[RMDB]
RNA sequence: GGGAACGACUCGAGUAGAGUCGAAAACCUGUUUCUACUCUGCUCUUAUCUGGUUCCUCUUAUCUCCUUUGGAAUUUAAGUUGGUCCAGGUAAUGCGCUUAUGUAUGCUUGCACGGCAUUGAUGACCCAUCUCAAUGGCGUUCGCGCCAUUGAGAUGAAAAGAAACAACAACAACAAC
Reactivity to DMS in 0.01 (KOAc 150mM, MgCl2 10mM, bicine 150mM(pH8.5), 24C), signal-to-noise 1, nucleotides 027 to 126: c020c050u010g010u010u000u000c000u000a040c060u000c010u000g000c000u000c010u000u000a020u000c090u010g060g030u020u000c010c000u000c070u000u000a000u010c120u000c000c000u030u050u030g010g000a150a020u000u000u000a010a000g080u040u000g000g000u030c000c000a000g010g010u000a040a020u040g010c130g000c020u020u010a040u010g000u000a030u040g060c080u000u040g000c130a130c180g000g000c000a040u030u000g000a020u000g050a080c000c030
Reactivity to 2A3 in 0.01 (KOAc 150mM, MgCl2 10mM, bicine 150mM(pH8.5), 24C), signal-to-noise 5, nucleotides 027 to 126: c010c000u020g050u000u020u000c020u020a020c020u020c020u070g000c000u020c000u050u030a000u010c010u020g040g000u180u260c010c000u000c000u000u000a010u010c010u030c000c040u130u090u260g080g030a160a110u050u070u020a040a040g070u120u040g020g000u000c010c000a000g000g020u030a060a050u100g020c030g010c030u110u050a130u200g130u000a020u080g030c030u090u090g070c120a040c090g010g000c010a030u010u070g080a050u100g020a050c000c000
Notes: Structure probing data (DMS and 2A3) for a 177-nucleotide construct. Reactivities are given for positions 27 through 126. The DMS profile rests on 1,921 reads. The reactions ran in a buffer of 150 mM KOAc, 10 mM MgCl2 and 150 mM bicine (pH 8.5), at 24 C. For 2A3 the reverse transcriptase was SuperScript II with manganese.